[RMDB]
RNA sequence: GGGAACGACUCGAGUAGAGUCGAAAAAGCCAUACCAUUACGAUGGUAUGGCAAGUCCGUGACGGCGAUCGAUCCCGCCUGGCCGAUGCCGAACUGCCGAUCUGGCUGAUGGUUCCUGCCCCGUCAAAAAACGUAAAGCACUUCGGUGCUUUACGAAACGAUUAAAAACCUUCGGGUUUUUAAUCGUAAAAGAAACAACAACAACAAC
Reactivity to 2A3 in 0.01 (KOAc 150mM, MgCl2 10mM, bicine 150mM(pH8.5), 24C), signal-to-noise 2, nucleotides 027 to 156: a010g010c000c000a000u000a000c010c000a000u140u000a090c290g060a020u000g000g010u010a000u000g010g000c010a010a010g000u000c010c020g000u040g040a050c060g000g050c030g050a080u110c030g000a040u040c060c010c000g020c010c050u030g040g000c050c030g060a030u100g010c000c000g020a100a060c040u060g020c040c010g090a190u070c050u130g000g020c000u030g040a090u110g010g000u030u060c010c010u030g030c020c010c000c000g060u050c040a090a070a010a030a010a010c000g000u000a000a010a010g000c000a010c030u020u110c290g080g000u000g000c000u010u000u000a000c000g000a010a010

Background:
The record gives the reactivity of an RNA of 207 nucleotides to 2A3. For 2A3, 982 sequencing reads were counted.